[RMDB]
RNA sequence: GGGAACGACUCGAGUAGAGUCGAAAAAGUGGGAAAACAUUACCAUCAGGAUCCUAUAAGGGGGUUAAGCUUGCGAAAUUUGGAAAAGAAAAUCUGAUGACACGGUUCAUCGAGGAACCCAGAGAGACGAUUUAUAUUAUUUCGAUAAUAUAAAUCGAAAAGAAACAACAACAACAAC
Reactivity to 2A3 in 0.01 (KOAc 150mM, MgCl2 10mM, bicine 150mM(pH8.5), 24C), signal-to-noise 2, nucleotides 027 to 126: a000g040u050g010g020g030a070a030a040a050c030a060u080u120a050c030c000a010u050c010a010g050g030a070u040c020c040u110a080u130a300a170g070g000g000g000g000u060u060a080a000g040c030u060u080g010c040g050a080a080a120u160u170u050g040g020a040a000a000a120g040a010a060a040a020u100c050u050g000a010u010g000a030c040a020c130g060g020u070u040c010a010u030c010g020a060g030g010a010a040c010c030c010a030g040a020g000a000g020a050
Reactivity to DMS in 0.01 (KOAc 150mM, MgCl2 10mM, bicine 150mM(pH8.5), 24C), signal-to-noise 4, nucleotides 027 to 126: a120g030u010g010g010g010a070a160a100a090c130a070u010u000a180c050c020a050u000c050a080g010g020a100u000c020c030u000a110u020a080a130g000g010g010g000g000u010u000a060a110g010c040u000u020g010c050g010a050a080a120u000u000u000g000g000a040a020a070a110g020a070a050a070a060u000c020u010g010a030u000g000a050c070a130c160g020g000u000u000c010a030u010c040g010a040g000g000a080a130c070c020c040a130g010a120g000a120g000a130
Source: RMDB library OK2TST, as collected in RNAgym.
Structure probing data (2A3 and DMS) for a 177-nucleotide construct.
For 2A3, 2,044 sequencing reads were counted.
For DMS, 3,364 sequencing reads were counted.